[RMDB]
Structure probing data (DMS and 2A3) for a 177-nucleotide construct.
For DMS, 3,340 sequencing reads were counted.
Reactivities are given for positions 27 through 126.
For DMS the reverse transcriptase was MarathonRT.
It was measured as part of the RMDB library OK2TST.
RNA sequence: GGGAACGACUCGAGUAGAGUCGAAAAACCUAUGAUCCUAGAUGUCUUCAAGCGCGGAGCAUGCUUGGCGUAGGUGAUCAUUGUGAGGGUCUAGGUAUUUUAGAAGAUAAAUGUGGUGGCAGCAACACGAUAACAGGUGGUUCGCCACCUGUUAUCGAAAAGAAACAACAACAACAAC
Reactivity to DMS in 0.01 (KOAc 150mM, MgCl2 10mM, bicine 150mM(pH8.5), 24C), signal-to-noise 3, nucleotides 027 to 126: a030c000c000u000a010u010g020a010u000c000c010u000a210g000a030u000g010u000c050u000u000c020a100a150g020c030g000c040g010g010a030g020c060a120u010g010c020u000u020g010g030c030g000u000a110g020g010u000g000a030u010c030a040u000u000g020u010g030a040g010g010g000u010c000u000a020g010g000u000a030u000u010u000u000a090g010a140a150g010a080u010a010a070a050u000g010u000g020g030u000g000g010c030a040g010c100a050a040c080a080
Reactivity to 2A3 in 0.01 (KOAc 150mM, MgCl2 10mM, bicine 150mM(pH8.5), 24C), signal-to-noise 3, nucleotides 027 to 126: a010c020c000u040a060u240g020a020u000c000c010u010a030g000a020u020g050u090c040u090u090c050a110a080g050c000g010c070g080g030a030g000c050a110u110g030c010u030u040g170g000c020g020u020a030g100g090u030g020a030u110c020a030u040u060g090u080g300a050g020g010g000u020c030u010a000g000g040u000a140u020u100u020u070a080g000a070a010g000a040u070a120a150a020u210g050u070g040g060u010g040g000c000a010g020c000a030a050c030a000